Conditions: 150 mM KOAc, 10 mM MgCl2 and 150 mM bicine (pH 8.5), 24 C. Structure probing data (DMS and 2A3) for a 207-nucleotide construct. It was measured as part of the RMDB library M2RFPK.

RNA sequence: GGGAACGACUCGAGUAGAGUCGAAAAACUUUGAUGGCGGUACUAUGAAUUGAUGCAAGGUGUGGAGCGACCUUAAACAGUUCUGGUGGUGCUCUGAAUGGAGUGCUGUACUGAGAUUAUAAAAUAGCAUGCAUAGAGUGCUUCGGCACUCUAUGAACUUCAUUACUUGCUUCGGCAAGUAAUGAAGAAAAGAAACAACAACAACAAC
Reactivity to DMS in 0.01 (KOAc 150mM, MgCl2 10mM, bicine 150mM(pH8.5), 24C), signal-to-noise 1, nucleotides 027 to 156: a050c040u000u010u010g010a000u000g030g010c020g020g020u000a080c050u010a100u010g000a090a100u000u010g010a100u010g000c140a080a060g000g000u000g040u000g000g000a110g000c060g000a130c020c040u000u000a050a090a060c100a120g040u000u000c050u010g000g020u000g020g020u000g010c000u000c040u000g020a110a070u010g050g000a060g040u000g000c000u010g030u000a080c060u000g010a080g000a030u000u010a110u000a060a050a080a130u000a060g060c030a120u000g030c010a020u000a020g010a070g070u010g000c000u000u010c300g060g000c010a000c010u000c000u000a000u000g010a030a090
Reactivity to 2A3 in 0.01 (KOAc 150mM, MgCl2 10mM, bicine 150mM(pH8.5), 24C), signal-to-noise 9, nucleotides 027 to 156: a000c060u140u080u100g060a060u060g030g010c020g020g030u030a030c030u060a060u140g050a070a050u100u050g050a050u080g070c040a030a020g020g000u020g020u060g020g010a010g000c030g020a020c000c000u040u100a090a070a010c020a050g000u030u020c010u040g020g020u040g010g010u010g010c010u000c010u050g120a070a060u200g010g010a010g020u020g000c010u020g010u040a040c020u040g020a010g020a130u070u150a060u190a130a060a060a030u120a040g080c080a040u120g010c000a000u010a000g000a000g000u000g000c000u010u030c030g050g000c000a000c010u000c000u000a000u000g000a000a000